[RMDB]
RNA sequence: GGGAACGACUCGAGUAGAGUCGAAAAGCAUCAGGCGCGUUCCAGCUUGCGAUCACGGGGAUCUCUACACGCAAGCAAGUAUAGCCAUCAGCACUUAAAGUAGGCCGCCGGGGACACUCACCUUAGCGUCAAACUAUAACUUCGGUUAUAGUUUGACAAAAGAAACAACAACAACAAC
Reactivity to DMS in 0.01 (KOAc 150mM, MgCl2 10mM, bicine 150mM(pH8.5), 24C), signal-to-noise 2, nucleotides 027 to 126: g010c050a060u000c100a130g000g020c070g000c060g010u000u000c020c070a120g010c030u000u000g040c030g000a060u000c130a210c220g010g020g000g000a060u030c060u000c010u010a120c110a100c030g010c040a000a020g000c040a030a020g000u000a100u000a130g000c020c010a100u000c040a100g000c040a060c060u000u000a050a070a150g000u010a110g010g000c040c060g020c010c040g030g000g000g010a040c100a080c050u000c040a020c080c030u000u010a060g020c140
Reactivity to 2A3 in 0.01 (KOAc 150mM, MgCl2 10mM, bicine 150mM(pH8.5), 24C), signal-to-noise 1, nucleotides 027 to 126: g010c030a030u150c090a080g070g000c040g010c000g050u060u000c010c000a000g000c000u000u000g030c020g100a140u080c060a070c170g000g020g020g060a060u050c080u010c030u150a020c050a010c070g020c010a000a030g000c000a000a000g070u090a060u110a090g020c010c000a050u040c020a010g030c030a000c050u070u120a150a040a040g030u060a100g080g040c000c030g030c040c010g000g000g000g000a010c010a020c060u030c010a090c030c010u020u050a050g060c010
Structure probing data (DMS and 2A3) for a 177-nucleotide construct.
The RNA was probed in 150 mM KOAc, 10 mM MgCl2 and 150 mM bicine (pH 8.5) at 24 C.
Reactivities are rounded to 0.1 and cut off at 0 and 3.
2A3 adducts were read by reverse transcription with SuperScript II with manganese.